[RMDB]
Source: RMDB library OK2TST, as collected in RNAgym. Chemical mapping of a 177-nucleotide RNA with 2A3 and DMS. The DMS profile rests on 24,959 reads. For 2A3, 25,130 sequencing reads were counted. The reactions ran in a buffer of 150 mM KOAc, 10 mM MgCl2 and 150 mM bicine (pH 8.5), at 24 C. For DMS the reverse transcriptase was MarathonRT. DMS (dimethyl sulfate) methylates the pairing face of unpaired adenines and cytosines.

RNA sequence: GGGAACGACUCGAGUAGAGUCGAAAACUCCAAUAGCAGUACGCAAUCGUUUUGAAUCCUGACUAGUCUUGAGGUUGAAACAAUGCUCUUUGGCACCCGGGACAAUACUACUUCGUGAUGCAGUGCCUGAUAAUUGAAGAUUCGUCUUCAAUUAUCAAAAAGAAACAACAACAACAAC
Reactivity to 2A3 in 0.01 (KOAc 150mM, MgCl2 10mM, bicine 150mM(pH8.5), 24C), signal-to-noise 9, nucleotides 027 to 126: c020u010c010c010a030a060u080a110g010c030a010g050u080a020c040g010c050a020a070u070c040g030u020u030u060u110g080a060a060u020c000c000u030g030a080c040u090a050g060u040c020u040u070g040a070g020g040u060u070g040a100a080a030c030a040a060u110g050c010u010c000u080u080u050g020g000c020a040c010c030c020g000g010g000a010c020a030a040u060a080c030u010a020c010u040u060c020g040u040g030a030u050g020c020a030g040u020g090c000c020
Reactivity to DMS in 0.01 (KOAc 150mM, MgCl2 10mM, bicine 150mM(pH8.5), 24C), signal-to-noise 9, nucleotides 027 to 126: c090u000c020c050a110a120u010a090g010c030a060g010u000a040c110g020c080a080a060u000c120g010u000u000u000u000g010a100a110u000c030c020u000g000a090c080u000a130g010u000c050u000u000g010a050g010g010u000u000g010a100a070a080c110a050a090u000g010c030u000c050u000u000u000g010g010c060a080c140c050c040g010g000g010a060c060a040a060u010a060c060u000a060c080u000u000c070g010u000g010a070u000g010c060a080g010u000g010c080c080